[RMDB]
Chemical mapping of a 207-nucleotide RNA with DMS and 2A3.
RNA sequence: GGGAACGACUCGAGUAGAGUCGAAAAGCAACGCAAAGCCGCGGCAAGUGGAGUUAGCGAGAAGAGACUAGGCUUUGGUUUCUUCAAGUGAAGCGGUCACCAAUCAGGUGUGGUAGGUACCGUAAAAAUAACCGCUCUUUGUUCGCAAAGAGCGGAACAUAGGCAAAUUCUUCGGAAUUUGCCUAUGAAAAGAAACAACAACAACAAC
Reactivity to DMS in 0.01 (KOAc 150mM, MgCl2 10mM, bicine 150mM(pH8.5), 24C), signal-to-noise 2, nucleotides 027 to 156: g030c020a120a070c030g000c020a050a080a130g020c000c030g040c080g020g020c060a060a110g080u000g000g010a140g030u010u000a280g030c050g000a300g000a060a060g020a080g010a000c010u000a100g040g010c190u000u010u000g030g000u010u000u000c000u010u000c020a040a250g030u010g010a120a220g000c020g030g000u000c040a040c020c010a090a060u010c090a090g030g020u020g020u000g030g020u000a030g030g030u000a220c000c010g000u000a000a030a090a070a100u000a070a140c000c000g040c010u020c000u000u010u000g030u010u000c240g000c000a030a010a020g020a030g000c020g000g000a000a020
Reactivity to 2A3 in 0.01 (KOAc 150mM, MgCl2 10mM, bicine 150mM(pH8.5), 24C), signal-to-noise 4, nucleotides 027 to 156: g000c020a020a030c030g010c060a080a070a030g020c010c030g050c040g030g030c080a090a060g050u070g070g060a090g060u160u170a040g050c040g020a060g010a070a010g020a000g010a010c020u060a040g080g110c070u100u080u110g000g000u000u000u000c000u010u010c020a030a030g020u060g090a070a020g010c000g020g000u020c040a030c040c010a030a080u120c050a060g090g060u090g040u040g110g000u040a070g020g040u020a030c010c020g010u040a060a030a020a040a040u110a080a060c000c000g010c000u000c000u010u010u000g020u030u090c140g000c100a000a000a000g000a000g000c000g000g000a000a000
The RNA was probed in 150 mM KOAc, 10 mM MgCl2 and 150 mM bicine (pH 8.5) at 24 C. For DMS the reverse transcriptase was MarathonRT. The data come from the RNA Mapping Database (RMDB), library M2RFPK. For DMS, 2,968 sequencing reads were counted.